[RMDB]
RNA sequence: GGGAACGACUCGAGUAGAGUCGAAAAUACUGGAGAGGCUAAGGUGGGAGGAUUGCUUUAGCCUAGGAGGUCAAGGCUGCAGUGAGCUAUGAUCACAUCACUGCACUCCAGCCGCAGUGGCAGAGUGUGCUCUACAAGGAUUCGUCCUUGUAGAGCAAAAAGAAACAACAACAACAAC
Reactivity to 2A3 in 0.01 (KOAc 150mM, MgCl2 10mM, bicine 150mM(pH8.5), 24C), signal-to-noise 2, nucleotides 027 to 126: u070a040c030u020g020g030a080g010a010g050g010c040u040a010a020g020g010u050g000g060g010a090g020g090a100u020u100g010c000u000u000u050a020g000c000c000u000a010g000g040a020g000g000u060c030a070a090g030g010c020u030g010c050a040g010u030g080a010g000c030u110a090u260g050a040u140c030a010c000a090u010c000a020c030u020g000c000a010c010u000c020c020a030g020c020c010g000c050a040g030u130g060g000c040a010g020a030g080u120g020
Reactivity to DMS in 0.01 (KOAc 150mM, MgCl2 10mM, bicine 150mM(pH8.5), 24C), signal-to-noise 4, nucleotides 027 to 126: u000a060c040u000g010g010a060g010a140g010g010c120u000a020a020g010g030u020g010g010g000a090g000g010a110u010u000g000c040u010u000u000a020g010c050c040u010a070g000g010a120g020g020u010c080a080a250g010g010c270u000g010c020a060g010u000g000a040g000c050u010a090u010g010a050u000c110a070c140a170u010c020a010c000u000g010c010a090c020u000c020c040a080g000c040c050g010c080a050g010u000g000g000c140a110g000a120g020u010g010